An RNA of 177 nucleotides, treated with DMS and read out base by base. The reactions ran in a buffer of 150 mM KOAc, 10 mM MgCl2 and 150 mM bicine (pH 8.5), at 24 C.
RNA sequence: GGGAACGACUCGAGUAGAGUCGAAAAGAUAUGGAUCGAUUCGGGUAGGGAUUGUGGUGCCAGUUGUGGUCGGAAACGACCAUACAACGGUAAGACCAUUAAUCCCUACCCGAAUCGAUCCUAAGUCGCUAAAAACAAUCUUCGGAUUGUUUUUAGCAAAAGAAACAACAACAACAAC
Reactivity to DMS in 0.01 (KOAc 150mM, MgCl2 10mM, bicine 150mM(pH8.5), 24C), signal-to-noise 2, nucleotides 027 to 126: g000a110u000a300u010g000g000a000u000c000g000a030u000u000c000g020g000g030u000a010g000g030g040a030u010u010g030u020g020g030u010g000c010c010a050g000u030u010g000u000g010g000u000c020g000g000a150a110a290c000g010a010c000c000a030u000a020c010a030a010c030g000g020u000a130a130g020a180c000c000a020u010u010a010a010u000c000c010c000u000a000c000c000c010g010a010a000u000c010g030a000u000c000c000u000a000a110g020u030c130